An RNA of 177 nucleotides, treated with 2A3 and read out base by base. The 2A3 profile rests on 639 reads. Values are in units of 0.01, from 0 to 300, in steps of 10. For 2A3 the reverse transcriptase was SuperScript II with manganese.

[RMDB]
RNA sequence: GGGAACGACUCGAGUAGAGUCGAAAAGAAAGAAAGAAAUAACUGGGGCCAGUUUCGGGGUGUGGGAGUGGUAUUAUUUUUUUAAAGUAAUAUUGCUCACUACACCUCCAAAUUGGUCUUGGUACAAGUAAGCUACAGUCUUCGGACUGUAGCUUACAAAAGAAACAACAACAACAAC
Reactivity to 2A3 in 0.01 (KOAc 150mM, MgCl2 10mM, bicine 150mM(pH8.5), 24C), signal-to-noise 1, nucleotides 027 to 126: g110a030a050a010g170a020a070a030g120a040a170a080u200a110a000c000u010g050g000g000g000c000c000a000g010u000u000u020c020g000g000g000g000u000g000u010g010g000g000a010g010u040g000g000u000a030u000u000a000u000u000u020u000u000u000u300a110a050a010g000u000a000a000u000a000u030u000g000c010u010c030a280c020u000a000c010a000c000c000u000c000c000a020a000a000u000u020g000g000u000c020u000u010g000g010u010a010c020a100a090